[RMDB]
RNA sequence: GGGAACGACUCGAGUAGAGUCGAAAACGUUGUCAUCGACAACACCCUAUGCAUUCAUGCUCUGUAAGGAUGCGCCGAAAGGUGAGCAAGCCCGAGUUGCCCAGACCUGAAAUGCAACACUUUAGACAAAACCCGAAGCAGUUCGCUGCUUCGGGAAGGCAUUAAAUAACUUCGGUUAUUUAAUGCCAAAAGAAACAACAACAACAAC
Reactivity to DMS in 0.01 (KOAc 150mM, MgCl2 10mM, bicine 150mM(pH8.5), 24C), signal-to-noise 1, nucleotides 027 to 156: c100g040u000u020g010u000c030a200u020c110g000a050c000a070a080c020a180c000c000c040u020a110u010g030c020a070u000u000c060a110u000g000c020u000c060u020g030u010a300a190g000g030a030u000g020c000g040c040c000g060a040a100a210g040g020u000g020a140g030c020a160a200g040c000c040c040g010a140g040u000u000g010c020c000c030a190g000a040c050c040u030g000a100a070a090u010g050c020a050a070c040a140c040u010u000u000a130g050a040c060a070a040a090a260c000c000c000g010a050a020g020c040a040g020u000u000c300g070c020u000g000c000u000u010c000g000g000g000a000a000
Reactivity to 2A3 in 0.01 (KOAc 150mM, MgCl2 10mM, bicine 150mM(pH8.5), 24C), signal-to-noise 3, nucleotides 027 to 156: c090g010u000u000g010u000c060a230u140c300g020a010c000a010a000c000a100c020c000c010u030a040u030g000c010a020u010u000c040a050u120g000c010u000c000u000g040u050a000a040g000g000a040u020g000c000g000c020c000g090a110a020a010g030g000u030g030a030g000c040a040a040g000c000c020c020g090a070g050u070u110g040c000c000c000a000g040a090c020c040u050g030a050a100a030u070g000c010a060a040c040a040c070u160u120u140a090g020a100c050a030a140a030a030c010c000c000g000a000a000g010c010a000g000u050u130c160g090c100u010g000c000u000u000c000g000g000g000a000a000
The data come from the RNA Mapping Database (RMDB), library M2RFPK. Chemical mapping of a 207-nucleotide RNA with DMS and 2A3. For 2A3 the reverse transcriptase was SuperScript II with manganese. For DMS, 1,445 sequencing reads were counted. DMS adducts were read by reverse transcription with MarathonRT. 2A3 is a SHAPE reagent: it acylates the 2'-hydroxyl of flexible nucleotides of all four kinds.